[RMDB]
RNA sequence: GGGAACGACUCGAGUAGAGUCGAAAAAGGCGUCAACGGGUCCGACAACUCCGCGCGCACGGCCUUGGUCAACUGCCAAAGCGCGUUCAAGGGUGCCUGGGUUAUUUGUGCGCCGCGCUUCGCCGUGCGCGCUGGUCAGUUUCGACUGACCAGCGCGAAAAGAAACAACAACAACAAC
Reactivity to DMS in 0.01 (KOAc 150mM, MgCl2 10mM, bicine 150mM(pH8.5), 24C), signal-to-noise 5, nucleotides 027 to 126: a130g000g020c030g000u010c080a080a080c130g000g010g000u000c000c050g020a060c190a070a100c060u020c060c080g010c050g010c000g010c010a020c060g010g010c020c280u020u000g000g000u010c160a090a160c210u060g000c020c020a070a070a030g010c000g010c000g010u020u030c140a130a120g030g000g010u000g010c020c020u010g000g020g020u030u060a070u020u030u010g010u030g040c000g000c040c040g000c020g000c010u000u020c140g000c000c010g010u000g000
Reactivity to 2A3 in 0.01 (KOAc 150mM, MgCl2 10mM, bicine 150mM(pH8.5), 24C), signal-to-noise 6, nucleotides 027 to 126: a000g050g010c010g040u040c010a040a060c060g070g010g000u020c040c010g080a040c020a060a080c040u040c020c020g000c020g000c010g010c010a000c010g020g000c010c030u060u040g080g000u210c140a200a080c140u170g000c020c010a070a070a100g050c070g000c010g050u100u090c050a070a060g070g070g010u040g020c000c010u070g050g000g010u150u170a230u150u190u100g060u080g010c010g000c000c010g010c010g000c020u080u090c050g050c030c000g020u020g020
Chemical mapping of a 177-nucleotide RNA with DMS and 2A3. Source: RMDB library OK1LIB, as collected in RNAgym.